[RMDB]
Conditions: 150 mM KOAc, 10 mM MgCl2 and 150 mM bicine (pH 8.5), 24 C. The record gives the reactivity of an RNA of 177 nucleotides to 2A3 and DMS. High 2A3 reactivity points to a flexible backbone, as in loops and unpaired stretches. 2A3 adducts were read by reverse transcription with SuperScript II with manganese. DMS adducts were read by reverse transcription with MarathonRT.
RNA sequence: GGGAACGACUCGAGUAGAGUCGAAAACGUCUGAUGGACAACCUGGCGGUGAUGCUAUUAGUUUGAGUUUUAAUAACCUUUUAGGGUUUGAUUCUAGUAAACCAGUCACUAAGAAAUACACUUACUCCGAUUUCUUAUGGUUCGCCAUAAGAAAUCGAAAAGAAACAACAACAACAAC
Reactivity to 2A3 in 0.01 (KOAc 150mM, MgCl2 10mM, bicine 150mM(pH8.5), 24C), signal-to-noise 2, nucleotides 027 to 126: c020g010u010c020u140g220a190u160g060g020a030c030a030a070c020c030u030g050g000c020g000g100u030g000a050u060g000c000u000a090u100u050a090g050u000u040u090g080a070g030u030u070u040u060a130a130u070a020a040c000c000u060u130u100u260a100g020g000g030u030u030u030g010a010u060u010c010u020a100g040u110a030a040a100c020c010a020g060u040c000a000c030u040a040a020g040a070a120a010u120a050c060a000c000u010u180a040c020u050c060
Reactivity to DMS in 0.01 (KOAc 150mM, MgCl2 10mM, bicine 150mM(pH8.5), 24C), signal-to-noise 1, nucleotides 027 to 126: c150g010u010c050u020g000a120u030g010g000a060c010a130a090c020c040u000g010g030c140g010g010u000g000a060u010g010c050u010a080u010u010a020g020u010u000u000g010a090g030u000u000u020u010a120a060u000a060a050c000c000u010u000u020u010a160g010g000g020u020u000u010g010a110u010u000c070u000a090g010u010a060a070a030c060c040a040g020u010c080a030c090u000a030a060g000a030a080a120u000a070c120a030c060u000u000a080c060u010c100